An RNA of 177 nucleotides, treated with 2A3 and DMS and read out base by base. The RNA was probed in 150 mM KOAc, 10 mM MgCl2 and 150 mM bicine (pH 8.5) at 24 C. The 2A3 profile rests on 24,014 reads.

[RMDB]
RNA sequence: GGGAACGACUCGAGUAGAGUCGAAAACAGUCCAGCAUAACGGAGCGGCCCUUGUAGCGGACAACCACACACGAACGGCCGACUUCCCCGCCGCUGCCGAUCGGUAGAAUCUCCACCUCGUCUGUGGUAAUAGCAGUAAUUUCGAUUACUGCUAUUAAAAAGAAACAACAACAACAAC
Reactivity to 2A3 in 0.01 (KOAc 150mM, MgCl2 10mM, bicine 150mM(pH8.5), 24C), signal-to-noise 8, nucleotides 027 to 126: c030a030g040u020c010c010a020g010c030a100u100a210a040c060g030g010a040g020c020g010g020c000c020c010u040u100g070u030a030g020c030g000g030a030c020a040a070c020c010a030c000a010c000a000c080g050a140a010c040g030g010c010c010g060a070c010u050u050c010c000c000c010g020c010c010g020c020u050g050c010c020g070a100u060c020g000g000u020a040g040a120a060u040c030u010c050c010a030c010c010u050c030g070u020c060u050g030u020g050g030
Reactivity to DMS in 0.01 (KOAc 150mM, MgCl2 10mM, bicine 150mM(pH8.5), 24C), signal-to-noise 9, nucleotides 027 to 126: c130a120g010u000c020c020a110g030c060a090u010a090a100c110g000g010a120g020c040g010g010c020c030c050u000u000g010u000a080g020c040g000g010a080c140a100a130c040c030a050c060a060c100a070c070g010a060a090c150g010g010c020c020g000a080c100u000u000c020c020c020c100g010c040c030g000c050u000g010c030c030g010a050u000c060g010g010u000a060g010a080a100u000c060u000c020c030a060c030c030u000c050g010u000c090u000g020u000g010g010